[RMDB]
RNA sequence: GGGAACGACUCGAGUAGAGUCGAAAAACGAUAACGAGGCGCUCGCUAUUGCUGCGUAACUGACGGCCUGACGGUCUGACGUUACAAAGCUAAAGCGCGGUUGGACCCCACCGGGCAACAGAAGGCGAAAGGCGACCCCGUUUCGACGGGGUCGCAACAUCAAGUGAAGAUUCGUCUUCACUUGAUGAAAAGAAACAACAACAACAAC
Reactivity to 2A3 in 0.01 (KOAc 150mM, MgCl2 10mM, bicine 150mM(pH8.5), 24C), signal-to-noise 1, nucleotides 027 to 156: a000c060g000a080u160a100a020c060g000a080g060g000c050g030c040u030c010g060c030u120a130u210u160g030c010u010g000c010g020u010a000a000c010u030g030a000c010g010g030c010c050u180g110a080c170g020g010u030c010u010g000a020c000g000u010u010a000c020a000a000a000g000c000u000a000a070a000g000c010g010c010g010g010u020u050g060g080a080c000c040c000c000a000c000c000g020g000g000c020a070a010c010a060g090a070a030g050g020c040g070a080a040a020g120g020c000g000a000c000c000c000c000g000u030u050u080c160g050a020c000g030g000g000g000u000c000g000c010a000a000
Reactivity to DMS in 0.01 (KOAc 150mM, MgCl2 10mM, bicine 150mM(pH8.5), 24C), signal-to-noise 1, nucleotides 027 to 156: a060c020g000a140u000a060a170c040g000a060g000g050c000g000c040u010c000g060c040u000a200u000u000g010c050u030g000c300g020u000a020a040c020u000g010a300c300g010g000c000c110u000g000a190c300g000g020u000c000u000g000a300c250g010u010u000a040c030a040a300a030g000c020u000a020a050a030g010c020g000c000g020g020u050u000g010g000a120c020c000c020c030a070c060c000g010g000g020c050a110a100c100a030g000a070a060g020g000c040g060a050a090a110g010g000c020g000a050c000c000c000c020g070u010u000u000c240g020a070c040g010g050g000g000u020c040g020c010a020a010